[RMDB]
RNA sequence: GGGAACGACUCGAGUAGAGUCGAAAAUUCCGCAUAUUGGCUUUGCGAAGUCGAUAUGGACAGGACAUAGUUAAAUUGCAAAUAACUAUGCAAGUAUUACUAUUUCCCAGAACGUUAUGUAACGUACGAUAACUAAAAGCUUCGGCUUUUAGUUAUCAAAAGAAACAACAACAACAAC
Reactivity to 2A3 in 0.01 (KOAc 150mM, MgCl2 10mM, bicine 150mM(pH8.5), 24C), signal-to-noise 3, nucleotides 027 to 126: u030u000c010c000g000c000a000u000a000u000u010g000g000c000u030u010u040g090c160g090a020a000g000u000c000g010a010u000a020u010g000g030a020c020a080g000g010a000c000a030u000a000g010u000u040a080a110a130u040u020g010c010a010a070a180u110a160a090c110u100a100u080g000c010a010a010g030u090a070u130u080a000c020u010a040u030u010u010c010c000c030a020g060a070a010c020g010u020u030a140u300g270u130a040a000c000g010u040a050c100
Reactivity to DMS in 0.01 (KOAc 150mM, MgCl2 10mM, bicine 150mM(pH8.5), 24C), signal-to-noise 4, nucleotides 027 to 126: u000u000c010c000g020c000a010u000a000u000u000g000g010c000u000u000u000g030c150g020a030a020g030u000c000g000a010u000a000u000g010g000a170c020a120g000g020a050c300a030u010a000g010u000u000a020a070a110u000u010g000c060a040a090a090u010a070a140c260u000a070u000g000c010a020a030g000u000a110u010u000a020c020u000a050u000u010u000c010c000c020a160g010a090a040c020g010u000u000a160u000g010u010a020a020c030g010u000a140c230